[RMDB]
RNA sequence: GGGAACGACUCGAGUAGAGUCGAAAAGAUUCCUCGUUGUUGAGCGAGGUUUGAACAAAUCGACCACACAAACGUAGAGCCGACUACGGAUUUAUAAAUUAAGGCAUUAAGUGUGAUAAGGAGACAAAAAACGAUGUUGUGUUCGCACAACAUCGAACUAGACGUUAGGGUUCGCCCUAACGUCUAGAAAAGAAACAACAACAACAAC
Reactivity to DMS in 0.01 (KOAc 150mM, MgCl2 10mM, bicine 150mM(pH8.5), 24C), signal-to-noise 1, nucleotides 027 to 156: g010a160u000u000c020c020u000c100g060u020u000g060u000u000g000a280g010c040g010a090g010g000u000u000u010g010a160a150c120a000a030a090u000c000g040a130c000c000a060c030a200c040a230a090a070c020g050u000a090g010a290g050c000c110g060a090c040u000a040c000g020g010a120u010u020u000a070u030a040a070a020u000u000a010a090g020g000c000a220u000u020a120a140g030u000g020u020g010a000u000a060a140g000g000a180g010a080c100a000a090a060a040a160a140c000g000a000u010g000u050u010g060u000g060u000u000c300g000c010a090c000a000a000c000a000u010c000g000a030a100
Reactivity to 2A3 in 0.01 (KOAc 150mM, MgCl2 10mM, bicine 150mM(pH8.5), 24C), signal-to-noise 1, nucleotides 027 to 156: g090a110u120u050c000c000u010c040g010u040u090g040u000u070g070a080g000c030g030a020g060g040u060u080u090g050a070a030c070a010a050a010u020c000g080a030c000c030a020c020a020c020a030a170a000c000g000u000a000g000a000g000c000c030g020a010c010u010a010c020g000g010a010u030u300u000a170u100a050a010a030u040u080a010a000g000g000c000a000u040u190a200a050g000u010g010u000g040a020u020a110a000g130g000a030g010a030c100a020a110a000a040a070a000c000g010a000u000g000u000u010g000u000g000u050u050c210g020c110a000c010a010a010c000a000u000c000g000a030a000
The data come from the RNA Mapping Database (RMDB), library M2RFPK. Chemical mapping of a 207-nucleotide RNA with DMS and 2A3. DMS (dimethyl sulfate) methylates the pairing face of unpaired adenines and cytosines. For DMS, 1,346 sequencing reads were counted. Conditions: 150 mM KOAc, 10 mM MgCl2 and 150 mM bicine (pH 8.5), 24 C. For 2A3, 597 sequencing reads were counted.